[RMDB]
Structure probing data (2A3 and DMS) for a 177-nucleotide construct. High 2A3 reactivity points to a flexible backbone, as in loops and unpaired stretches. For DMS, 6,016 sequencing reads were counted.
RNA sequence: GGGAACGACUCGAGUAGAGUCGAAAAGAUAUGGACGUCCUGUAGCGAAGAACAUAGGACUCGGAAACGAGUCUAUGGGAGCUACGCGGACGUCCUAAGUCAAAAUCACUAAGUUCGCUUAGUGAAAUCGUGUUUAUAGGUUCGCCUAUAAACACGAAAAAGAAACAACAACAACAAC
Reactivity to 2A3 in 0.01 (KOAc 150mM, MgCl2 10mM, bicine 150mM(pH8.5), 24C), signal-to-noise 4, nucleotides 027 to 126: g010a010u040a050u120g010g000a000c010g000u010c000c010u040g010u020a000g000c020g240a300a050g020a260a030c010a000u030a040g300g210a110c010u000c010g000g010a010a040a030c000g000a000g020u000c000u010a000u000g000g000g040a120g000c000u000a010c010g020c150g010g000a000c000g000u020c000c000u000a000a000g000u000c010a000a010a010a220u050c010a010c000u010a000a000g030u060u140c300g110c180u000u000a000g000u020g010a110a020a020
Reactivity to DMS in 0.01 (KOAc 150mM, MgCl2 10mM, bicine 150mM(pH8.5), 24C), signal-to-noise 4, nucleotides 027 to 126: g010a010u000a300u010g000g010a020c010g010u000c000c010u000g020u000a000g040c000g000a130a160g000a180a240c010a000u010a040g020g000a030c000u000c000g000g000a030a080a120c000g010a010g000u000c000u000a000u000g010g000g020a080g020c000u000a000c010g020c230g010g010a020c010g010u000c000c000u000a000a060g000u000c020a130a090a130a180u000c010a010c000u000a010a010g010u010u010c270g010c000u010u000a010g010u010g000a010a070a100
The reactions ran in a buffer of 150 mM KOAc, 10 mM MgCl2 and 150 mM bicine (pH 8.5), at 24 C.